Structure probing data (2A3 and DMS) for a 177-nucleotide construct. DMS (dimethyl sulfate) methylates the pairing face of unpaired adenines and cytosines. For DMS the reverse transcriptase was MarathonRT. The 2A3 profile rests on 1,174 reads. For 2A3 the reverse transcriptase was SuperScript II with manganese.
RNA sequence: GGGAACGACUCGAGUAGAGUCGAAAAAAAGUUAGCGUACUAGAGUCGCCGUGAGUACGCUAUGGUUCCGUGAGACUCUACUGGAGCGUAUCACGGAACCCACGUACAUACCGUACGUGCUAUAAAAGAGUUCUCUUCUGUUCGCAGAAGAGAACUCAAAAGAAACAACAACAACAAC
Reactivity to 2A3 in 0.01 (KOAc 150mM, MgCl2 10mM, bicine 150mM(pH8.5), 24C), signal-to-noise 1, nucleotides 027 to 126: a000a000a000g040u010u000a000g030c000g000u020a000c000u030a020g120a140g240u150c070g030c160c000g170u180g070a000g000u000a030c000g000c030u000a040u010g000g000u000u040c000c000g030u010g010a050g030a080c000u050c020u100a250c200u260g000g030a010g010c070g020u090a030u100c000a000c000g000g000a010a000c000c000c000a010c010g000u000a000c010a050u120a200c000c110g000u010a000c010g030u010g010c020u070a100u060a140a070a020a010
Reactivity to DMS in 0.01 (KOAc 150mM, MgCl2 10mM, bicine 150mM(pH8.5), 24C), signal-to-noise 1, nucleotides 027 to 126: a060a010a020g000u000u000a000g000c000g000u000a020c010u000a170g000a120g010u010c020g020c090c010g010u000g000a030g000u000a010c000g030c000u000a010u000g000g010u000u000c000c000g030u000g000a030g020a160c000u000c000u000a120c180u000g000g020a000g000c090g000u000a180u000c000a020c020g010g000a010a010c000c010c020a000c000g010u000a000c000a080u010a070c290c120g000u000a000c010g020u000g000c040u000a080u000a070a040a110a140